The record gives the reactivity of an RNA of 177 nucleotides to DMS and 2A3. Reactivities are given for positions 27 through 126. Values are in units of 0.01, from 0 to 300, in steps of 10. It was measured as part of the RMDB libraries RFM100 and RFMREP. The reactions ran in a buffer of 150 mM KOAc, 10 mM MgCl2 and 150 mM bicine (pH 8.5), at 24 C. 2A3 adducts were read by reverse transcription with SuperScript II with manganese.
RNA sequence: GGGAACGACUCGAGUAGAGUCGAAAAACUAUGGUACGCCAUAGAAUCAUGUACUGCAGUUGCCUUUUUGUUCCCAUGCUGUUUAAGCCUAGCAUAGGCACCAAAAAGCAACAACAGUAUGUGAAAAGACCAAGUUCUAAUUCGUUAGAACUUGGUCAAAAGAAACAACAACAACAAC
Reactivity to DMS in 0.01 (KOAc 150mM, MgCl2 10mM, bicine 150mM(pH8.5), 24C), signal-to-noise 5, nucleotides 027 to 126: a100c010u010a000u000g000g020u010a060c210g030c010c000a010u000a010g010a150a140u010c000a010u000g000u000a010c000u000g010c300a110g000u000u000g000c050c050u000u000u000u000u000g000u000u000c040c000c030a020u000g000c000u000g010u010u020u020a110a180g010c300c120u010a030g000c010a010u010a050g000g000c120a050c060c060a020a010a010a000a040g010c010a010a010c010a050a120c010a010g000u000a010u010g020u010g000a020a060a090a170
Reactivity to 2A3 in 0.01 (KOAc 150mM, MgCl2 10mM, bicine 150mM(pH8.5), 24C), signal-to-noise 9, nucleotides 027 to 126: a000c000u000a000u000g000g000u070a050c250g050c030c000a000u000a000g020a000a080u030c000a000u010g010u010a010c000u010g010c040a060g000u000u010g020c020c020u010u020u000u000u010g010u030u020c010c000c000a000u000g000c000u040g120u230u160u230a130a070g050c040c090u100a000g000c010a000u020a050g000g000c030a000c000c000a000a010a000a000a000g010c000a000a000c000a020a010c000a000g010u000a000u010g020u000g020a080a080a010a010